Structure probing data (DMS and 2A3) for a 177-nucleotide construct.
Reactivities are given for positions 27 through 126.
2A3 adducts were read by reverse transcription with SuperScript II with manganese.
Conditions: 150 mM KOAc, 10 mM MgCl2 and 150 mM bicine (pH 8.5), 24 C.
For 2A3, 9,730 sequencing reads were counted.
RNA sequence: GGGAACGACUCGAGUAGAGUCGAAAACAGCUCGGCGGGAUCAAUCUUAACCACCGGCCCCAGCAGCACGAUCUGCCAUUCGGGGCGGCGGCGAGCAAGUUCACCGAUCAGGGCGGUAUCGAAGCGCCCUGUCCGAUCAAUUCGUUGAUCGGACAGGAAAAGAAACAACAACAACAAC
Reactivity to DMS in 0.01 (KOAc 150mM, MgCl2 10mM, bicine 150mM(pH8.5), 24C), signal-to-noise 9, nucleotides 027 to 126: c090a130g020c050u000c020g010g020c050g010g010g000a050u010c110a100a190u010c050u010u000a120a250c060c080a040c020c010g030g010c010c000c000c010a130g000c040a030g020c090a120c230g000a120u010c030u000g010c010c060a180u010u000c170g010g000g010g010c010g010g010c010g010g030c100g000a040g000c110a080a120g010u000u000c030a130c010c010g010a060u010c070a060g010g000g000c010g000g010u000a090u010c110g010a120a120g010c060g000c050
Reactivity to 2A3 in 0.01 (KOAc 150mM, MgCl2 10mM, bicine 150mM(pH8.5), 24C), signal-to-noise 5, nucleotides 027 to 126: c010a000g000c000u010c010g080g000c010g010g030g030a030u100c070a120a100u030c100u110u100a070a090c020c010a020c030c030g300g010c040c000c000c000a000g000c010a000g010c010a020c300g040a290u060c000u010g000c010c030a110u220u220c110g000g000g000g000c000g000g000c000g020g000c010g010a010g010c010a030a000g010u020u050c090a130c190c010g010a110u110c070a060g030g040g000c030g050g050u090a110u200c120g080a110a020g080c000g020c000